[RMDB]
RNA sequence: GGGAACGACUCGAGUAGAGUCGAAAAAUGUGUCUCUAACUGUGCCACUCUGUGGUUCAGGAAACCUGGUUGAAAAACUUUCACCAUGGUUCAUGGAUGGCGAAAAUGCCUAUGAAGUGGUGAAGGCGCUUAUACUAGGGUUCGCCCUAGUAUAAGCAAAAGAAACAACAACAACAAC
Reactivity to 2A3 in 0.01 (KOAc 150mM, MgCl2 10mM, bicine 150mM(pH8.5), 24C), signal-to-noise 1, nucleotides 027 to 126: a000u060g040u010g040u020c010u010c000u070a120a000c000u010g000u010g000c020c020a020c010u270c030u120g000u010g020g000u000u000c010a000g020g040a030a020a000c000c070u050g040g020u050u100g130a040a040a040a030a070c020u000u000u010c000a010c010c000a010u040g250g000u010u020c000a000u020g150g120a080u110g020g000c010g070a220a140a070a100u240g000c000c000u000a000u020g020a030a010g000u000g020g000u000g020a000a000g010g000c070
Reactivity to DMS in 0.01 (KOAc 150mM, MgCl2 10mM, bicine 150mM(pH8.5), 24C), signal-to-noise 2, nucleotides 027 to 126: a050u010g010u010g020u010c030u010c050u000a110a190c030u000g000u010g000c070c130a020c010u010c150u010g020u010g000g020u010u010c050a010g000g000a030a060a080c090c040u010g000g030u000u020g000a070a030a040a110a070c030u000u010u010c000a000c000c000a020u000g010g010u000u000c040a040u010g010g010a110u000g000g020c000g000a080a060a160a110u020g010c000c000u010a040u000g000a060a080g020u010g000g040u000g000a030a010g010g020c150
This 177-nucleotide RNA was probed chemically with 2A3 and DMS.
The reactions ran in a buffer of 150 mM KOAc, 10 mM MgCl2 and 150 mM bicine (pH 8.5), at 24 C.
For 2A3, 1,286 sequencing reads were counted.
2A3 adducts were read by reverse transcription with SuperScript II with manganese.
Reactivities are rounded to 0.1 and cut off at 0 and 3.
The data come from the RNA Mapping Database (RMDB), library 15KREP.
The DMS profile rests on 1,744 reads.